Source: RMDB library OK2TRN, as collected in RNAgym. This 177-nucleotide RNA was probed chemically with DMS and 2A3. The reactions ran in a buffer of 150 mM KOAc, 10 mM MgCl2 and 150 mM bicine (pH 8.5), at 24 C. Reactivities are given for positions 27 through 126.
RNA sequence: GGGAACGACUCGAGUAGAGUCGAAAAUAAUUCACGAUACUGAUGUAUCAGAGAGUAUAGCUGCUGAUAGCUUUGUUGAUAUUGAGAGCUGCUAGAUUGCUCAGUGACAUCAAAAAAUUGGAUCAGCAUUUGGGAGCUAUUUCGAUAGCUCCCAAAUAAAAGAAACAACAACAACAAC
Reactivity to DMS in 0.01 (KOAc 150mM, MgCl2 10mM, bicine 150mM(pH8.5), 24C), signal-to-noise 2, nucleotides 027 to 126: u010a090a070u000u000c060a130c120g030a060u000a050c080u020g020a080u020g010u000a040u000c010a130g000a130g010a040g010u000a100u000a070g010c070u000g020c010u000g010a090u000a030g020c070u000u000u010g020u010u010g010a060u000a040u000u000g000a250g010a030g010c000u000g010c110u010a070g010a130u000u010g010c000u000c000a040g000u010g000a040c010a010u000c020a020a030a060a050a040a100u000u010g010g010a050u000c040a030g000c120
Reactivity to 2A3 in 0.01 (KOAc 150mM, MgCl2 10mM, bicine 150mM(pH8.5), 24C), signal-to-noise 1, nucleotides 027 to 126: u050a000a100u150u050c000a000c200g000a010u050a100c010u150g190a080u150g000u030a030u080c020a030g030a000g080a010g000u010a010u000a130g090c050u010g000c030u020g010a020u040a010g000c000u060u030u110g160u100u010g060a080u010a130u120u150g090a060g000a000g090c080u040g000c030u040a080g020a300u090u300g020c000u040c000a010g080u030g040a000c050a010u060c090a000a000a000a080a080a110u140u140g000g000a000u080c060a000g070c050
Values are in units of 0.01, from 0 to 300, in steps of 10.